The data come from the RNA Mapping Database (RMDB), library OK3TST. An RNA of 207 nucleotides, treated with 2A3 and DMS and read out base by base. Reactivities are rounded to 0.1 and cut off at 0 and 3. For 2A3 the reverse transcriptase was SuperScript II with manganese. Reactivities are given for positions 27 through 156. The reactions ran in a buffer of 150 mM KOAc, 10 mM MgCl2 and 150 mM bicine (pH 8.5), at 24 C. For DMS, 2,531 sequencing reads were counted.
RNA sequence: GGGAACGACUCGAGUAGAGUCGAAAAGUAAUAGAUAACUGGAUGCAGCGUAGGCGACAACGCAUAUCCAGUACGAAUGGUACCUGUAAAUAAAAUAUGUCGCCUAGUACAAGUACCAACAGAAGGAUAAGCGAUGGUGAUGUCAAUCACAUUUGCACCCUAAAUAGCACUUCGGUGCUAUUUAGGGAAAAGAAACAACAACAACAAC
Reactivity to 2A3 in 0.01 (KOAc 150mM, MgCl2 10mM, bicine 150mM(pH8.5), 24C), signal-to-noise 3, nucleotides 027 to 156: g020u060a020a180u080a100g140a170u120a140a060c010u000g000g020a000u070g090c260a090g000c270g020u010a040g000g040c000g010a000c000a010a000c000g000c010a020u050a010u180c000c000a000g020u010a000c000g040a100a050u070g000g000u010a000c000c000u030g020u060a000a100a180u140a070a050a060a010u120a060u010g010u010c000g000c000c010u030a000g000u000a010c000a000a030g010u000a010c010c000a030a030c000a030g120a110a030g060g010a060u020a110a090g000c040g040a020u040g030g050u030g000a010u070g060u160c070a070a030u030c010a020c020a040u020u050u170g010c030a030
Reactivity to DMS in 0.01 (KOAc 150mM, MgCl2 10mM, bicine 150mM(pH8.5), 24C), signal-to-noise 2, nucleotides 027 to 156: g030u000a020a120u020a060g000a100u000a110a140c020u000g010g010a060u000g040c130a070g000c000g020u000a070g000g080c020g010a020c010a080a050c000g030c000a100u000a090u000c000c000a070g000u000a050c020g030a060a080u000g000g000u000a030c000c010u000g030u000a000a060a190u010a100a120a080a210u000a090u000g030u000c030g010c000c010u000a100g000u000a080c010a020a020g000u000a010c010c010a040a160c130a120g010a060a080g010g000a110u000a070a130g000c080g010a040u000g000g050u010g030a000u000g000u000c290a150a050u000c050a030c010a100u000u000u000g060c040a130